[RMDB]
Annotation
An RNA of 177 nucleotides, treated with DMS and 2A3 and read out base by base.
RNA sequence: GGGAACGACUCGAGUAGAGUCGAAAAUCACGAAGCUGGUCAUACAAUUAUCGGUAUGGUACUUGAUGAGGCAGAAGUAGUGCAUAAAGUUACUAUUGUUCCACGUGGACAAGCAGGUGGUUAUGCACCCUCCUGAGCUGUUCGCAGCUCAGGAGGGAAAAGAAACAACAACAACAAC
Reactivity to DMS in 0.01 (KOAc 150mM, MgCl2 10mM, bicine 150mM(pH8.5), 24C), signal-to-noise 1, nucleotides 027 to 126: u040c090a200c070g050a250a080g000c040u000g040g000u010c000a010u020a070c020a030a050u010u050a000u000c040g020g040u010a190u050g010g030u000a000c060u010u000g000a030u020g000a000g010g000c030a040g140a130a030g000u040a050g030u000g000c020a030u000a060a000a070g000u000u020a020c020u000a000u040u010g040u040u010c000c010a080c300g000u170g000g000a050c020a020a000g000c060a110g000g000u000g000g000u000u000a050u000g000c000a080
Reactivity to 2A3 in 0.01 (KOAc 150mM, MgCl2 10mM, bicine 150mM(pH8.5), 24C), signal-to-noise 3, nucleotides 027 to 126: u110c040a020c080g000a020a020g000c020u020g000g110u030c000a000u040a110c020a120a040u080u020a020u040c090g210g030u270a140u240g010g030u000a060c030u040u050g050a020u010g000a030g100g000c040a000g010a090a010g060u200a000g040u000g000c020a000u000a000a010a020g120u260u030a020c000u060a070u040u040g030u060u000c020c020a130c300g140u300g030g000a020c000a020a000g040c070a020g070g030u000g000g040u000u000a010u030g000c000a000

The reactions ran in a buffer of 150 mM KOAc, 10 mM MgCl2 and 150 mM bicine (pH 8.5), at 24 C.
2A3 adducts were read by reverse transcription with SuperScript II with manganese.
2A3 is a SHAPE reagent: it acylates the 2'-hydroxyl of flexible nucleotides of all four kinds.
Source: RMDB library OK1LIB, as collected in RNAgym.